[RMDB]
RNA sequence: GGGAACGACUCGAGUAGAGUCGAAAACAUAAGACCUCAAAGCUAAUGAGCCACAUACCUACCCAAGGUGAAAGCUCCUUCUCUCGCAAUGUGUAACUCAUGAUUCUCAUGACCCCUGGUUGGAGAGCGCGCUAACACGCCUUCGGGCGUGUUAGAAGUGGUAAUUAACUUUCGAGUUAAUUACCACAAAAGAAACAACAACAACAAC
Reactivity to 2A3 in 0.01 (KOAc 150mM, MgCl2 10mM, bicine 150mM(pH8.5), 24C), signal-to-noise 5, nucleotides 027 to 156: c030a040u170a100a040g080a070c020c030u100c110a100a050a040g040c040u120a170a070u120g020a020g020c040c010a030c000a080u180a070c030c000u040a050c000c020c020a030a010g010g000u040g040a080a060a010g010c010u030c000c010u080u050c030u000c010u010c030g060c080a050a120u090g060u030g020u130a060a050c020u000c030a030u020g040a140u290u060c090u030c070a030u080g040a090c010c010c000c040u030g070g000u040u030g010g010a030g000a010g020c070g000c010g000c030u000a000a000c010a000c000g010c000c010u020u030c070g050g000g000c000g020u000g000u000u000a000g000a010a010
Reactivity to DMS in 0.01 (KOAc 150mM, MgCl2 10mM, bicine 150mM(pH8.5), 24C), signal-to-noise 3, nucleotides 027 to 156: c050a120u000a080a100g010a080c030c030u000c040a070a140a180g000c030u010a100a130u000g010a050g070c010c000a070c080a160u000a060c050c020u010a100c020c040c040a120a100g010g020u000g000a080a100a110g010c020u010c020c030u000u000c040u000c020u000c030g040c030a090a080u010g010u010g000u000a050a040c060u000c010a040u020g000a100u000u000c050u020c000a060u000g010a140c020c010c000c010u010g000g040u000u000g000g000a070g020a060g030c070g040c060g010c000u000a010a030c000a010c030g000c000c000u000u020c300g050g010g000c000g000u000g010u010u000a000g010a020a110